[RMDB]
RNA sequence: GGGAACGACUCGAGUAGAGUCGAAAAUGAAAGAGCGUCGCAAACACACAGACUAAGUCUCACACUGACUGACGCUAAACCGCUCUGUCAGUGUCGGAGAUAUCGGUAUUAAUGUGAGCGGAAAAAAGAGUAUAAUAAGAUUCGUCUUAUUAUACUCAAAAGAAACAACAACAACAAC
Reactivity to DMS in 0.01 (KOAc 150mM, MgCl2 10mM, bicine 150mM(pH8.5), 24C), signal-to-noise 9, nucleotides 027 to 126: u010g010a090a070a070g000a090g020c080g020u000c010g020c030a070a130a120c080a040c060a050c170a100g000a030c060u000a050a210g010u000c000u000c020a070c010a020c000u000g000a020c010u000g000a020c080g010c030u010a040a090a100c240c090g000c080u000c010u000g000u000c000a010g010u000g010u000c200g030g000a020g010a020u000a040u010c130g000g010u000a040u000u000a080a120u000g010u000g000a150g010c030g000g010a000a050a050a060a060a080
Reactivity to 2A3 in 0.01 (KOAc 150mM, MgCl2 10mM, bicine 150mM(pH8.5), 24C), signal-to-noise 9, nucleotides 027 to 126: u160g030a040a050a040g090a020g040c050g050u050c010g020c040a030a180a020c030a000c010a000c010a030g070a040c040u080a150a060g030u010c000u000c000a010c000a000c000u000g000a000c000u020g010a010c080g000c020u030a130a050a030c050c020g000c030u000c010u020g000u000c000a000g000u000g030u050c080g100g000a020g000a010u040a070u030c020g010g010u040a040u110u130a160a080u070g010u010g010a010g010c030g020g040a040a080a010a000a010a050